[RMDB]
This 177-nucleotide RNA was probed chemically with DMS and 2A3.
RNA sequence: GGGAACGACUCGAGUAGAGUCGAAAACUCGAACGGUUCGCCGUUCGAGAAAAGCGCGUCAGCGCUACGAUGCAACCGCAAGCGCGUGCAUCGUAAAUGAAAAAACUUGUGUGUUCGCACACAAGAAGUUUCUAAAGCUGUUCGCAGCUUUAGAAACAAAAGAAACAACAACAACAAC
Reactivity to DMS in 0.01 (KOAc 150mM, MgCl2 10mM, bicine 150mM(pH8.5), 24C), signal-to-noise 3, nucleotides 027 to 126: c000u010c000g000a020a010c000g010g020u000u010c220g020c000c000g010u030u000c000g030a000g010a010a040a060a230g000c000g000c000g000u000c180a120g000c000g000c050u000a010c010g010a000u000g000c000a040a060c290c020g040c050a170a170g000c210g030c040g020u000g010c000a000u000c000g010u000a000a040a070u000g000a000a060a060a060a110a110c010u000u000g000u000g000u000g000u010u010c170g000c000a010c000a000c000a000a010g010a070a030
Reactivity to 2A3 in 0.01 (KOAc 150mM, MgCl2 10mM, bicine 150mM(pH8.5), 24C), signal-to-noise 3, nucleotides 027 to 126: c000u000c000g000a020a000c000g020g020u090u050c190g050c090c000g000u000u000c000g000a000g010a000a030a000a000g000c000g000c000g120u160c120a080g000c000g000c000u010a000c000g000a010u000g010c020a090a150c100c030g010c090a240a170g210c100g000c020g170u040g000c000a000u000c000g000u010a020a050a070u150g020a040a070a030a030a000a050c000u000u020g000u000g010u010g020u010u060c210g000c060a000c000a000c000a010a000g020a010a010

Source information
It was measured as part of the RMDB library M2PK50. For DMS, 2,109 sequencing reads were counted. Reactivities are given for positions 27 through 126.